[RMDB]
RNA sequence: GGGAACGACUCGAGUAGAGUCGAAAAGAUUAAGUGGGAGCGUCGCCCUAUCGGUGCAUCGGAUAUUAAUUAGCCAGUGCGUGGCAUUACGCAUAUUGAUGUCUACUUUGGCGUAGACUCUGCCAAUUUAAGGAUUGGUGGGCAAUCCAGCCCUAGAGGCUACCAUUAGUUUCGACUAAUGGUAGCCAAAAGAAACAACAACAACAAC
Reactivity to 2A3 in 0.01 (KOAc 150mM, MgCl2 10mM, bicine 150mM(pH8.5), 24C), signal-to-noise 2, nucleotides 027 to 156: g040a050u210u300a110a000g060u070g010g020g000a060g070c020g080u040c030g020c040c020c010u110a120u120c050g020g020u150g010c010a040u050c060g000g000a000u020a010u130u170a210a090u080u080a060g000c030c060a060g020u000g000c050g000u000g080g000c110a030u090u140a020c030g050c020a000u000a040u030u120g110a020u120g000u000c000u010a030c060u060u170u250g070g000c030g000u000a050g030a030c030u000c040u030g000c010c010a010a040u080u100u120a130a080g060g000a010u010u010g020g020u020g010g000g000c050a080a040u040c120c070a010g090c010c000c000u040a040g060a100